This 177-nucleotide RNA was probed chemically with 2A3 and DMS. For DMS the reverse transcriptase was MarathonRT. Reactivities are given for positions 27 through 126. The RNA was probed in 150 mM KOAc, 10 mM MgCl2 and 150 mM bicine (pH 8.5) at 24 C. For 2A3, 12,241 sequencing reads were counted. It was measured as part of the RMDB library VIROID. 2A3 adducts were read by reverse transcription with SuperScript II with manganese.
[RMDB]
RNA sequence: GGGAACGACUCGAGUAGAGUCGAAAAGGGUGCCCUAUUCGGAGCACUGCAGUUCCCGAUAGAAAGGCUAAGCACCUCGCAAUGACGUAAGGUGGGACUUUUCCUUCUGGAACCUAGCGGUAGGUUCGAAAGUAGAUUAGUUCGCUAAUCUACUUUCAAAAGAAACAACAACAACAAC
Reactivity to 2A3 in 0.01 (KOAc 150mM, MgCl2 10mM, bicine 150mM(pH8.5), 24C), signal-to-noise 7, nucleotides 027 to 126: g080g000g010u020g000c010c000c020u080a230u080u300c150g000g000a120g030c010a010c020u120g060c020a000g000u010u000c000c000c010g000a030u040a060g070a010a070a000g030g000c040u060a020a040g060c010a010c010c010u010c010g000c030a170a300u300g100a200c050g030u070a030a050g010g000u030g010g030g060a060c000u050u020u010u000c010c000u050u050c040u060g060g000a010a000c010c010u010a030g030c030g090g130u040a010g010g000u000u020c040
Reactivity to DMS in 0.01 (KOAc 150mM, MgCl2 10mM, bicine 150mM(pH8.5), 24C), signal-to-noise 8, nucleotides 027 to 126: g010g010g010u000g010c000c000c010u000a170u000u010c200g010g000a080g010c010a020c010u000g010c080a130g010u000u000c000c000c010g000a080u010a040g000a040a030a020g000g010c070u000a090a130g010c020a020c000c000u000c020g020c020a180a150u000g010a140c150g010u000a050a020g010g020u000g010g000g000a140c020u000u000u000u000c010c070u000u000c040u000g010g010a010a010c000c010u000a040g000c170g000g010u000a020g010g000u000u000c020